[RMDB]
RNA sequence: GGGAACGACUCGAGUAGAGUCGAAAAGAAUAUAAAGCGCGAGGGACCAAUUGCGAGCGACCUCGCGCCACCAGCUGCCGACUCACCAAGCGCGCAGCCAGCUGGAGGUUACGCUCGCAAGAGAAGAGGUAUUUACUACCUUCGGGUAGUAAAUACCAAAAGAAACAACAACAACAAC
Reactivity to 2A3 in 0.01 (KOAc 150mM, MgCl2 10mM, bicine 150mM(pH8.5), 24C), signal-to-noise 6, nucleotides 027 to 126: g010a050a020u240a020u080a200a070a000g000c000g000c000g010a000g020g000g040a020c040c030a080a300u080u040g000c000g000a000g000c000g010a010c000c000u000c000g010c000g000c000c000a010c000c000a000g000c000u000g010c010c020g130a180c050u050c060a090c030c040a130a060g040c030g010c040g020c130a010g010c010c000a020g000c010u030g030g000a030g100g020u120u080a020c020g000c000u000c000g000c000a000a000g030a010g020a150a050g090a030
Reactivity to DMS in 0.01 (KOAc 150mM, MgCl2 10mM, bicine 150mM(pH8.5), 24C), signal-to-noise 2, nucleotides 027 to 126: g010a040a070u080a030u010a050a160a170g000c030g000c000g000a070g040g000g000a210c050c120a080a060u030u000g000c010g000a000g010c040g000a050c000c000u000c000g030c000g010c000c090a010c020c120a060g060c010u000g000c160c010g010a090c080u000c050a180c110c160a040a120g030c050g030c050g030c050a060g050c100c070a000g030c010u000g010g000a200g000g000u020u020a060c030g000c000u030c000g000c010a010a090g010a130g000a070a100g010a190
This 177-nucleotide RNA was probed chemically with 2A3 and DMS.
It was measured as part of the RMDB library OK1LIB.
The reactions ran in a buffer of 150 mM KOAc, 10 mM MgCl2 and 150 mM bicine (pH 8.5), at 24 C.
For 2A3 the reverse transcriptase was SuperScript II with manganese.